[RMDB]
RNA sequence: GGGAACGACUCGAGUAGAGUCGAAAACUGCAGGUCAACGGUACUUCUUCAGAUCAGCUAUUGCAGAAGAAAGGUCAGCCAAGCGCUCUGGGCCAGUACGACUGUAUAUAGGAGCUUCUGAUUUCAACCAGAAGCUAACUCUCUCCGAAACAAUGAGCAUUUUAUGCUGCUUCGGCAGCAUAAAAUGAAAAGAAACAACAACAACAAC
Reactivity to 2A3 in 0.01 (KOAc 150mM, MgCl2 10mM, bicine 150mM(pH8.5), 24C), signal-to-noise 3, nucleotides 027 to 156: c030u030g000c020a000g070g020u080c060a080a040c060g060g000u050a020c040u060u030c000u040u040c020a020g010a130u030c030a020g040c040u090a080u200u150g010c040a040g000a170a000g050a040a140a020g020g020u110c030a000g000c050c010a070a040g000c020g020c030u030c020u060g040g010g000c030c030a020g020u040a020c010g020a020c060u050g050u060a080u030a030u050a180g150g000a030g000c000u010u010c020u020g100a140u140u230u280c060a060a040c020c000a000g000a000a000g000c000u000a000a000c000u010c000u000c000u000c020c050g110a140a090a050c070a040a140u170g000a010g030
Reactivity to DMS in 0.01 (KOAc 150mM, MgCl2 10mM, bicine 150mM(pH8.5), 24C), signal-to-noise 1, nucleotides 027 to 156: c010u000g000c070a150g010g010u000c030a100a120c050g030g030u010a060c010u030u000c060u000u000c020a100g010a090u000c090a150g010c090u000a060u000u000g000c050a190g020a080a120g010a030a040a050g020g030u010c010a040g000c020c040a080a040g000c050g030c050u000c050u000g020g020g010c040c010a090g040u010a050c070g010a120c060u000g020u000a110u000a200u000a150g010g000a130g000c000u000u000c000u020g000a050u000u000u030c200a100a020c040c000a030g000a030a000g000c000u000a050a060c040u000c030u010c010u020c050c050g000a210a100a030c040a100a120u000g010a090g050
Structure probing data (2A3 and DMS) for a 207-nucleotide construct.
High 2A3 reactivity points to a flexible backbone, as in loops and unpaired stretches.
DMS adducts were read by reverse transcription with MarathonRT.
The data come from the RNA Mapping Database (RMDB), library OK3TST.
Values cover nucleotides 27 to 156.
2A3 adducts were read by reverse transcription with SuperScript II with manganese.